[RMDB]
RNA sequence: GGGAACGACUCGAGUAGAGUCGAAAAUGACCAUUUCGAUGGUCAAACAUGGGGUCGUUGUCUCUAGCGUGAGCGACGAUCAUGGCUGAAGCCUCCACGGCCAUGGGAGCUUCGGGUAAACGACGGAGGCACCCUCGAUGCAAACUUCGGUUUGCAAUGUUGAGAUCCAUUUCGAUGGAUCUCAACAAAAAGAAACAACAACAACAAC
Reactivity to 2A3 in 0.01 (KOAc 150mM, MgCl2 10mM, bicine 150mM(pH8.5), 24C), signal-to-noise 2, nucleotides 027 to 156: u070g010a000c000c000a010u040u130u130c250g120a030u000g000g000u020c040a010a130a000c140a180u190g010g000g070g000u040c020g040u070u030g140u020c000u000c060u110a090g130c060g130u140g120a030g000c020g300a300c010g010a050u010c000a000u010g020g000c020u010g020a080a000g030c000c000u000c010c000a010c010g020g000c000c000a000u000g000g020g000a030g000c030u050u110c050g040g050g010u140a110a080a000c040g040a030c030g010g000a000g010g010c000a020c010c000c000u020c030g110a080u110g000c000a010a010a000c010u020u090c200g130g000u000u000u000g000c000a020a050
This 207-nucleotide RNA was probed chemically with 2A3. 2A3 adducts were read by reverse transcription with SuperScript II with manganese. Reactivities are given for positions 27 through 156.